[RMDB]
RNA sequence: GGGAACGACUCGAGUAGAGUCGAAAAACUAGUAUGUACAGGGGUAAGUUGACCUGUCAUCUAGACAACUUACCAGGUACUCAAAGGUAAGUUGUUUGAGUACCACAGAGUACGAACUAAGUACUCAGACUAUGGAUUCCUUCGGGGAUCUAUAGUCAAAAGAAACAACAACAACAAC
Reactivity to DMS in 0.01 (KOAc 150mM, MgCl2 10mM, bicine 150mM(pH8.5), 24C), signal-to-noise 9, nucleotides 027 to 126: a080c010u000a010g000u040a010u000g000u040a010c010a020g000g000g010g010u020a050a090g000u010u020g010a080c010c010u000g000u010c060a030u010c040u000a010g000a060c020a010a020c020u010u000a020c010c000a100g010g020u020a040c120u020c070a040a080a060g000g000u010a050a060g010u010u010g010u000u010u010g000a050g010u000a060c000c000a190c210a080g010a020g010u000a000c010g000a080a100c180u030a070a090g000u000a010c000u000c000a140
Reactivity to 2A3 in 0.01 (KOAc 150mM, MgCl2 10mM, bicine 150mM(pH8.5), 24C), signal-to-noise 9, nucleotides 027 to 126: a000c000u010a000g050u100a030u030g040u070a010c000a000g030g020g010g060u160a130a080g070u140u110g090a080c000c000u000g010u010c000a010u000c000u010a000g020a030c020a010a000c010u020u020a010c000c000a020g060g030u040a040c020u020c090a050a030a000g050g010u050a020a050g050u030u040g010u000u020u030g010a000g000u020a010c000c010a020c050a030g000a000g000u000a000c000g050a140a050c060u090a110a030g000u000a000c000u000c000a010

Chemical mapping of a 177-nucleotide RNA with DMS and 2A3. The 2A3 profile rests on 19,887 reads. The reactions ran in a buffer of 150 mM KOAc, 10 mM MgCl2 and 150 mM bicine (pH 8.5), at 24 C. Reactivities are given for positions 27 through 126.